[RMDB]
RNA sequence: GGGAACGACUCGAGUAGAGUCGAAAAGAUAUGGACCUACAGGGAGCACGAACGAUCACGUUGAAAAUAUCGGAAACGAUAUUUUCAACGUGAUCGUUCAGUGCGAAGAACUGUCAGGUCCUAAGUCCAAUUUAAUCUGCUUCGGCAGAUUAAAUUGAAAAGAAACAACAACAACAAC
Reactivity to DMS in 0.01 (KOAc 150mM, MgCl2 10mM, bicine 150mM(pH8.5), 24C), signal-to-noise 1, nucleotides 027 to 126: g010a160u000a280u010g000g000a000c000c000u000a030c020a000g010g000g020a080g000c000a010c010g010a020a010c010g020a020u000c000a000c010g000u000u000g000a020a010a010a010u010a000u000c030g010g000a110a090a290c010g000a030u000a000u000u000u000u000c000a000a000c030g030u000g000a000u000c000g020u010u000c010a010g070u000g000c010g000a060a120g000a130a220c000u000g000u000c250a000g000g020u000c000c010u010a000a100g000u000c060
The data come from the RNA Mapping Database (RMDB), library TTRINS.
The record gives the reactivity of an RNA of 177 nucleotides to DMS.
The DMS profile rests on 1,546 reads.